An RNA of 177 nucleotides, treated with 2A3 and DMS and read out base by base. For DMS the reverse transcriptase was MarathonRT. Source: RMDB library M2PK90, as collected in RNAgym.

[RMDB]
RNA sequence: GGGAACGACUCGAGUAGAGUCGAAAAUAAACGAGCGUAAUCGCGACUUGACGUGAGUGGGAUAGCCUAGACUGUAGGCUAUCCCAAGUGUGCAUAGCGCACAAUACGCUGAUCUACAGUCAAAGAAGGCUAAAAAUAGGUUCGCCUAUUUUUAGCCAAAAGAAACAACAACAACAAC
Reactivity to 2A3 in 0.01 (KOAc 150mM, MgCl2 10mM, bicine 150mM(pH8.5), 24C), signal-to-noise 3, nucleotides 027 to 126: u260a010a060a030c130g020a020g010c000g010u010a020a020u010c010g020c010g080a100c090u170u220g100a080c010g020u030g010a020g040u050g000g010g000a010u010a000g010c000c000u010a070g010a020c000u000g010u020a000g000g020c000u000a000u010c000c000c000a000a010g000u000g010u010g000c060a190u170a240g030c000g000c030a000c000a000a020u020a000c000g000c000u010g010a000u010c010u000a010c000a010g010u010c020a010a040a000g160a070a050
Reactivity to DMS in 0.01 (KOAc 150mM, MgCl2 10mM, bicine 150mM(pH8.5), 24C), signal-to-noise 4, nucleotides 027 to 126: u010a070a110a080c180g000a030g020c010g040u010a030a080u000c010g010c000g020a140c290u010u010g020a100c020g040u000g000a040g020u000g000g000g010a010u000a010g000c000c000u000a050g020a030c000u000g010u000a010g010g000c000u010a000u000c000c000c000a000a010g010u000g010u010g010c000a210u010a110g000c170g010c000a010c020a040a110u000a000c000g000c000u000g000a070u020c200u000a000c020a010g010u010c000a080a130a120g000a120a100